[RMDB]
RNA sequence: GGGAACGACUCGAGUAGAGUCGAAAACGUGCUAGAUACAAUGACCUUGUCCCGCGCAUUUACCGUUGUGUCGAAAUAAGGCGUAAGCCUGUGAACCAUUAUAAGCGAUUGAUUGUGUGCUGAGUGGUCCUUUAGUUAAGUUCGCUUAACUAAAGGAAAAAGAAACAACAACAACAAC
Reactivity to 2A3 in 0.01 (KOAc 150mM, MgCl2 10mM, bicine 150mM(pH8.5), 24C), signal-to-noise 9, nucleotides 027 to 126: c050g050u090g040c020u040a030g000a060u070a070c030a040a090u100g070a090c000c010u040u080g040u030c010c010c010g000c020g000c020a080u060u090u150a120c050c010g010u020u020g020u010g010u030c010g040a040a050a070u180a070a020g010g000c030g050u060a050a040g010c000c010u010g010u040g030a010a010c010c000a020u050u050a090u110a220a050g030c060g030a060u040u130g090a120u090u060g070u020g040u040g070c030u030g020a030g040u050g020g010
Reactivity to DMS in 0.01 (KOAc 150mM, MgCl2 10mM, bicine 150mM(pH8.5), 24C), signal-to-noise 9, nucleotides 027 to 126: c110g020u010g010c040u010a070g010a070u010a040c060a040a050u010g010a120c120c050u000u010g010u000c030c020c040g010c090g010c050a060u010u010u010a080c120c040g020u000u000g020u000g010u010c030g010a080a070a090u020a070a020g000g010c000g000u030a100a120g010c000c000u000g010u010g010a090a120c040c030a040u010u010a080u020a090a060g010c020g000a090u010u010g000a100u010u010g010u000g010u010g010c030u000g000a080g010u010g000g010